[RMDB]
RNA sequence: GGGAACGACUCGAGUAGAGUCGAAAAAGCCGCAGUACAUGCCCAAUCCGAUCGACACCAACAACGUGCAUCUGGACAACGACCUCAACUCGCUGGUCCAGAAGUUCAGCGAGCACUACCACGAUGAGAUACCGUGAUGGUUCGCCAUCACGGUAUCAAAAGAAACAACAACAACAAC
Reactivity to DMS in 0.01 (KOAc 150mM, MgCl2 10mM, bicine 150mM(pH8.5), 24C), signal-to-noise 2, nucleotides 027 to 126: a140g040c020c030g020c050a020g030u000a070c080a090u020g010c020c020c040a110a140u010c040c020g000a070u010c090g030a080c070a100c030c070a040a040c150a030a070c090g030u000g010c040a100u000c010u000g010g020a010c000a010a070c050g010a060c100c060u000c300a040a110c300u000c020g030c010u000g030g010u020c010c030a070g010a070a140g010u020u000c030a040g000c080g010a060g010c080a050c030u000a070c090c030a120c070g000a090u010g010a240
Reactivity to 2A3 in 0.01 (KOAc 150mM, MgCl2 10mM, bicine 150mM(pH8.5), 24C), signal-to-noise 1, nucleotides 027 to 126: a000g050c020c010g000c020a000g010u030a030c020a080u100g020c000c000c010a020a030u010c000c020g050a090u070c060g030a040c010a000c040c000a080a060c000a020a080c100g040u030g000c000a060u000c030u070g020g030a020c000a020a020c070g020a020c010c030u250c040a040a050c040u020c030g010c000u070g020g020u000c000c010a050g020a090a010g010u050u050c020a010g000c000g040a030g010c020a020c020u070a010c010c040a070c050g050a100u080g070a040